The record gives the reactivity of an RNA of 207 nucleotides to DMS and 2A3. For DMS, 4,091 sequencing reads were counted. Values cover nucleotides 27 to 156.
RNA sequence: GGGAACGACUCGAGUAGAGUCGAAAAGCAAUACAAUUCAAGCCAAAACAGCUUUAACUGUUGAAGCAAUAAUGAACAUUCAAGGACAUCUCAAACAAUCAGAUCAAAAGUUAGUUGAUGAGCAAACCAGUCAAUAUCUCACUUAUCUUACCUCCAACUACCUAGACUAGUUCGCUAGUCUAGGUAGAAAAGAAACAACAACAACAAC
Reactivity to DMS in 0.01 (KOAc 150mM, MgCl2 10mM, bicine 150mM(pH8.5), 24C), signal-to-noise 3, nucleotides 027 to 156: g010c050a120a180u000a190c050a110a120u000u000c070a090a140g020c020c010a020a280a080a070c030a020g020c010u000u010u000a110a100c020u000g020u010u000g000a300a060g000c010a090a110u000a080a110u010g000a050a060c030a100u000u000c060a080a100g020g000a060c020a040u000c010u000c040a070a050a090c090a060a060u000c070a070g010a050u000c050a070a080a100a140g010u000u010a060g010u000u000g030a120u000g000a070g010c070a040a080a060c010c030a150g010u000c000a040a060u010a040u000c030u000c030a040c060u010u000a060u020c080u010u010a100c010c030u000c020c010a020a150
Reactivity to 2A3 in 0.01 (KOAc 150mM, MgCl2 10mM, bicine 150mM(pH8.5), 24C), signal-to-noise 8, nucleotides 027 to 156: g020c020a060a060u090a130c010a010a020u060u070c030a070a010g000c010c030a070a080a050a060c030a040g020c010u100u120u170a070a040c020u030g010u050u060g030a070a010g020c030a010a050u150a110a070u100g040a050a030c040a080u050u120c050a080a030g050g010a040c020a090u050c060u040c050a060a090a090c030a070a090u120c050a020g040a100u070c040a050a070a080a040g050u060u050a020g000u030u060g030a080u050g020a020g020c060a060a080a050c050c030a020g050u030c020a040a040u040a100u130c030u020c030a030c020u050u060a060u100c030u060u100a080c030c020u080c050c000a040a060
The RNA was probed in 150 mM KOAc, 10 mM MgCl2 and 150 mM bicine (pH 8.5) at 24 C. As a SHAPE reagent, 2A3 marks flexible, mostly unpaired nucleotides at the ribose 2'-OH. Values are in units of 0.01, from 0 to 300, in steps of 10. 2A3 adducts were read by reverse transcription with SuperScript II with manganese.